[RMDB]
RNA sequence: GGGAACGACUCGAGUAGAGUCGAAAAGGUCAGGGACGCGCCGAUGCCUGCAAGAUCCUCCGUGGCCAUCGCCACCAAGUCCGGCGCUGCAAUCACGAAAGACAUCCGACACCUCCCAGCUGGCCGGGUAGCAUCCGACAUUCGUGUCGGAUGCUACAAAAGAAACAACAACAACAAC
Reactivity to DMS in 0.01 (KOAc 150mM, MgCl2 10mM, bicine 150mM(pH8.5), 24C), signal-to-noise 1, nucleotides 027 to 126: g000g010u000c030a090g000g000g050a110c180g000c040g000c000c000g000a030u000g000c030c020u010g020c110a100a090g000a030u000c010c010u000c150c110g000u000g010g010c030c100a050u000c140g020c000c030a050c030c160a110a120g000u010c070c010g040g000c040g090c020u000g040c120a110a120u000c070a120c070g020a100a040a170g000a040c080a020u000c000c000g000a100c100a050c010c130u010c030c010c000a200g010c080u000g010g010c020c020g000g000